[RMDB]
RNA sequence: GGGAACGACUCGAGUAGAGUCGAAAAUGUCCUCACAGAGUGGAAGAUAUCACAAAUGAUCAAGAAAACGAGCUCUAUAAGCAGCUGACAUGUGCAAUUGGGGACAGUGGUUCUUGAAAUCGUUAUGAUUAAAUUUAUUAUUCGUAAUAAAUUUAAUAAAAGAAACAACAACAACAAC
Reactivity to 2A3 in 0.01 (KOAc 150mM, MgCl2 10mM, bicine 150mM(pH8.5), 24C), signal-to-noise 4, nucleotides 027 to 126: u070g020u020c000c000u030c000a060c030a020g170a020g050u130g030g030a100a060g030a120u100a030u210c030a020c060a090a150a100u120g020a030u070c020a030a080g060a070a080a010a010c030g020a020g040c010u000c000u020a080u030a170a030g010c030a010g030c030u090g070a050c030a130u180g020u020g040c030a050a100u140u080g020g000g000g000a000c010a010g030u030g060g100u060u000c040u010u070g030a060a100a080u060c030g030u090u100a090u210g010
Reactivity to DMS in 0.01 (KOAc 150mM, MgCl2 10mM, bicine 150mM(pH8.5), 24C), signal-to-noise 5, nucleotides 027 to 126: u020g020u000c000c000u010c060a090c240a100g010a130g030u000g000g000a110a100g020a090u030a070u010c030a070c100a090a100a110u030g000a070u010c050a060a070g010a080a050a070a080c090g000a090g010c030u000c020u010a090u020a080a120g010c090a030g010c070u000g010a080c100a050u010g020u010g010c070a080a110u030u010g020g000g010g000a030c030a060g010u010g000g010u000u000c070u000u010g000a050a090a090u010c040g010u020u020a100u030g010
The record gives the reactivity of an RNA of 177 nucleotides to 2A3 and DMS.
DMS adducts were read by reverse transcription with MarathonRT.
The RNA was probed in 150 mM KOAc, 10 mM MgCl2 and 150 mM bicine (pH 8.5) at 24 C.